[RMDB]
RNA sequence: GGGAACGACUCGAGUAGAGUCGAAAAGACCCGAAGAGGAAAGAAGAACUCGGACGCGAACCGUGAGUGGAACCCUGAUCCUUUAUUGGGGAGUACACUCGAGGAGUGGAAGGCGUUGUUGGGGGGGUAGGUGCACUCUUCGGAGUGCACAAAAGAAACAACAACAACAAC
Reactivity to DMS in 0.01 (KOAc 150mM, MgCl2 10mM, bicine 150mM(pH8.5), 24C), signal-to-noise 3, nucleotides 027 to 129: g060a110c040c010c020g010a080a090g010a030g030g040a010a040a030g000a000a000g010a040a050c000u000c120g040g010a000c090g060c000g030a110a100c070c040g070u020g000a040g000u040g030g000a180a220c040c020c040u020g030a030u040c300c100u020u080u040a030u040u060g020g030g020g000a080g030u040a190c070a020c030u020c010g040a030g030g000a060g010u060g030g000a050a070g000g030c080g030u030u010g010u000u000g030g010g040g020g000g040g060u070a040g020
Reactivity to 2A3 in 0.01 (KOAc 150mM, MgCl2 10mM, bicine 150mM(pH8.5), 24C), signal-to-noise 2, nucleotides 027 to 129: g000a020c090c000c000g010a040a020g000a050g000g020a060a000a000g040a060a030g000a030a000c010u000c000g000g030a030c010g000c020g030a000a070c000c010g040u130g010a050g000u050g000g010a100a000c010c000c000u000g010a040u100c010c070u060u160u100a070u040u030g000g000g030g000a010g020u010a000c020a020c000u050c010g000a000g030g020a000g030u080g000g020a000a000g020g020c040g040u030u090g010u010u010g000g000g000g000g000g000g000u050a000g000